[RMDB]
RNA sequence: GGGAACGACUCGAGUAGAGUCGAAAAGGACGCUUCGGCGUCCGUGGUGCGUACUACGAGGAGUAGAGCGUUGAAAUACAGGGAGAACUCUCCCAAAUAGGAGAGUUUCUGUAUGGAGCUCUAUGACUCGUAUCGCUAGAGGGUGGUUCGCCACCAACAAUGUAGGCGCAUUCGUGCGCCUACAUUGAAAAGAAACAACAACAACAAC
Reactivity to DMS in 0.01 (KOAc 150mM, MgCl2 10mM, bicine 150mM(pH8.5), 24C), signal-to-noise 1, nucleotides 027 to 156: g030g000a010c000g080c010u000u000c300g060g040c000g020u000c000c010g000u010g000g040u000g010c030g040u020a100c130u000a010c000g020a030g000g020a300g000u000a000g010a020g020c010g000u020u000g010a220a050a030u000a010c020a010g000g020g000a300g000a040a010c000u000c000u010c000c000c030a010a060a130u000a000g010g010a030g000a040g010u010u000u010c000u010g040u000a020u000g000g000a300g000c000u020c000u000a000u000g030a300c000u000c000g010u010a000u000c040g030c050u000a080g010a120g000g000g000u000g010g010u000u020c130g030c000c020a010c000c000a070a110
Reactivity to 2A3 in 0.01 (KOAc 150mM, MgCl2 10mM, bicine 150mM(pH8.5), 24C), signal-to-noise 1, nucleotides 027 to 156: g000g000a000c000g030c000u030u120c210g270g000c000g000u000c010c000g000u050g030g130u090g020c070g030u050a090c010u000a000c020g010a000g000g020a020g040u030a020g000a000g000c000g070u210u090g020a000a010a010u000a000c000a000g020g020g070a210g100a060a000c020u040c010u000c000c040c050a210a200a100u170a070g000g000a000g000a000g000u000u020u000c000u000g000u010a000u000g030g020a010g010c000u000c000u000a010u020g000a020c000u050c000g000u000a000u000c000g000c000u020a040g060a090g170g070g040u020g020g000u040u080c150g050c010c000a000c010c000a000a020
An RNA of 207 nucleotides, treated with DMS and 2A3 and read out base by base. 2A3 adducts were read by reverse transcription with SuperScript II with manganese. For DMS the reverse transcriptase was MarathonRT. For DMS, 2,329 sequencing reads were counted.